[RMDB]
Conditions: 150 mM KOAc, 10 mM MgCl2 and 150 mM bicine (pH 8.5), 24 C. This 177-nucleotide RNA was probed chemically with 2A3 and DMS. The DMS profile rests on 1,451 reads. For DMS the reverse transcriptase was MarathonRT. It was measured as part of the RMDB library OK1LIB. Values are in units of 0.01, from 0 to 300, in steps of 10.
RNA sequence: GGGAACGACUCGAGUAGAGUCGAAAAGAAAAGAAAACGCAGCCAAGCGCGUGCGGAAGGCUGCGAAGAAGCACGCGCGUAAAGGUGGACGCACAAACAAAACAAAAGUGGACACCACGGAAAGAAAGCGGAUUAAUUAGUUCGCUAAUUAAUCCGCAAAAGAAACAACAACAACAAC
Reactivity to 2A3 in 0.01 (KOAc 150mM, MgCl2 10mM, bicine 150mM(pH8.5), 24C), signal-to-noise 1, nucleotides 027 to 126: g040a000a050a000a010g120a000a080a000a000c020g000c010a000g000c040c000a020a030g000c020g000c000g000u010g020c040g000g060a020a000g050g000c000u020g000c020g010a020a000g010a010a000g000c000a000c010g000c000g020c020g000u050a010a010a160g030g010u000g000g030a050c040g070c060a010c010a050a050a000c030a000a020a080a000c100a020a110a090a040g020u020g000g010a000c000a070c010c000a010c040g130g040a040a120a070g070a080a070a000
Reactivity to DMS in 0.01 (KOAc 150mM, MgCl2 10mM, bicine 150mM(pH8.5), 24C), signal-to-noise 2, nucleotides 027 to 126: g000a110a010a170a100g010a180a090a130a030c050g020c020a020g000c000c000a100a130g010c000g030c000g040u040g000c020g000g000a250a100g030g000c030u020g050c100g000a010a040g000a300a180g000c000a000c000g010c000g000c000g080u000a030a000a030g000g010u000g000g000a060c070g000c000a020c140a000a000a060c240a100a000a080a020c060a050a170a150a140g000u000g000g030a070c060a000c040c030a080c070g000g010a030a130a040g020a030a030a200